[RMDB]
Source information
An RNA of 177 nucleotides, treated with DMS and 2A3 and read out base by base. The 2A3 profile rests on 4,333 reads. The RNA was probed in 150 mM KOAc, 10 mM MgCl2 and 150 mM bicine (pH 8.5) at 24 C. Reactivities are rounded to 0.1 and cut off at 0 and 3. DMS adducts were read by reverse transcription with MarathonRT.
RNA sequence: GGGAACGACUCGAGUAGAGUCGAAAAGCGCGUUAAUACGGCCGGUAUGCCUUCUUGCCCAUCAAAAUGAGGUAGAAGCGUGUGGGGUCAGUGAUACCGUCGUUUUGUUACCGAAGGUAUAUUGCGCCGAGGCAAUAUGUUUCGACAUAUUGCCUCGAAAAGAAACAACAACAACAAC
Reactivity to DMS in 0.01 (KOAc 150mM, MgCl2 10mM, bicine 150mM(pH8.5), 24C), signal-to-noise 5, nucleotides 027 to 126: g020c050g030c030g020u000u010a080a100u010a070c020g020g010c020c020g000g010u000a010u000g000c030c000u000u000c010u000u000g030c020c040c040a070u010c150a050a050a080a110u010g000a150g020g020u000a010g010a100a090g010c130g030u000g030u000g000g000g000g000u000c020a100g020u010g000a150u000a010c010c010g000u000c010g020u000u000u000u000g010u000u010a120c210c060g000a020a020g010g010u000a000u000a080u010u000g000c120g020c040
Reactivity to 2A3 in 0.01 (KOAc 150mM, MgCl2 10mM, bicine 150mM(pH8.5), 24C), signal-to-noise 4, nucleotides 027 to 126: g000c030g000c020g060u080u200a040a030u140a170c010g010g000c000c000g020g150u010a000u020g010c010c000u000u000c040u040u170g040c010c050c010a060u120c080a020a110a070a120u050g030a090g000g000u010a000g020a070a000g030c050g030u030g060u030g010g070g000g000u060c070a100g020u030g090a020u010a030c020c010g160u110c010g000u040u010u060u120g090u050u090a050c020c020g000a020a010g020g020u030a030u010a020u060u130g000c050g030c030